[RMDB]
RNA sequence: GGGAACGACUCGAGUAGAGUCGAAAAACAUGUGAUGGUUAUUCCUUAGAUAGCGAGUUCCAACAAACCACACCAAACAGAAGAACAGAGGCGAUUCAAAUUGACGGCAUGUAUGGUCAAGAUGUGUUCGGAGACUUUGGAGCAUAUGACAACACACCAGCAGUGAAGAUUUCGAUCUUCACUGCUGAAAAGAAACAACAACAACAAC
Reactivity to 2A3 in 0.01 (KOAc 150mM, MgCl2 10mM, bicine 150mM(pH8.5), 24C), signal-to-noise 3, nucleotides 027 to 156: a020c040a050u130g030u040g050a130u050g030g070u060u050a050u160u160c020c020u040u050a090g010a100u090a020g110c090g020a020g030u080u000c040c010a010a000c030a060a150a010c020c000a020c020a010c010c030a080a080a030c040a090g080a100a010g020a110a030c040a050g010a040g050g000c030g010a010u110u060c080a050a100a050u060u120g020a010c030g000g040c040a030u070g020u090a070u070g060g000u040c040a020a040g030a090u090g050u010g030u080u050c080g030g000a040g020a030c000u080u110u130g010g020a020g000c030a040u080a030u150g020a040c040a110a010c010a070c010a030c120
Reactivity to DMS in 0.01 (KOAc 150mM, MgCl2 10mM, bicine 150mM(pH8.5), 24C), signal-to-noise 2, nucleotides 027 to 156: a070c070a090u000g050u000g020a140u000g000g010u010u000a080u000u000c020c010u000u000a090g020a110u010a110g020c050g000a140g060u000u000c020c040a110a170c140a080a070a050c020c000a050c040a070c040c020a050a100a140c040a070g000a050a080g000a070a060c050a090g000a090g030g040c050g040a150u000u000c050a080a030a130u000u010g000a090c040g040g020c040a070u000g000u000a050u000g010g020u000c040a050a040g030a080u000g040u000g040u000u000c060g010g020a210g000a040c040u010u010u020g030g020a080g000c050a050u000a060u000g010a110c100a050a060c150a000c050a080c070

The record gives the reactivity of an RNA of 207 nucleotides to 2A3 and DMS. The 2A3 profile rests on 2,159 reads. In probing experiments dimethyl sulfate is read out at A N1 and C N3, which are open when not base-paired. DMS adducts were read by reverse transcription with MarathonRT. It was measured as part of the RMDB library OK3TST.